[RMDB]
RNA sequence: GGGAACGACUCGAGUAGAGUCGAAAAACUCCGAUUGGCGCUGCAAGACAGCACUUGCAGGGUCAAGAGCUCGGUGAAGUCGGCUGAAUACACUCGCUGUAUCGACAACAAUCAUAUUGUAUCGUUAUCAUGGACAUUGGUUCGCCAAUGUCCAUGAAAAAGAAACAACAACAACAAC
Reactivity to DMS in 0.01 (KOAc 150mM, MgCl2 10mM, bicine 150mM(pH8.5), 24C), signal-to-noise 2, nucleotides 027 to 126: a150c110u010c020c090g000a220u010u010g040g000c000g000c000u030g000c000a000a000g000a270c130a120g030c200a190c010u000u010g000c000a010g020g010g020u000c030a030a030g000a130g020c090u000c010g000g000u040g040a080a070g010u000c020g010g010c000u020g020a170a040u010a010c070a070c040u010c090g000c100u020g020u000a060u000c000g020a010c000a160a050c160a070a030u010c150a080u060a300u000u000g020u000a060u020c090g020u010u000a130
Reactivity to 2A3 in 0.01 (KOAc 150mM, MgCl2 10mM, bicine 150mM(pH8.5), 24C), signal-to-noise 2, nucleotides 027 to 126: a000c000u000c020c000g030a060u020u010g020g020c150g040c140u000g020c010a010a020g050a130c120a050g090c070a060c050u010u000g000c010a020g050g000g000u020c000a000a000g090a010g070c050u060c080g000g050u060g100a130a100g030u030c020g030g030c030u080g070a090a010u140a090c060a000c080u090c020g000c060u000g020u110a070u060c030g060a070c000a090a000c010a050a070u150c110a100u120a040u120u070g000u030a060u070c080g000u050u000a060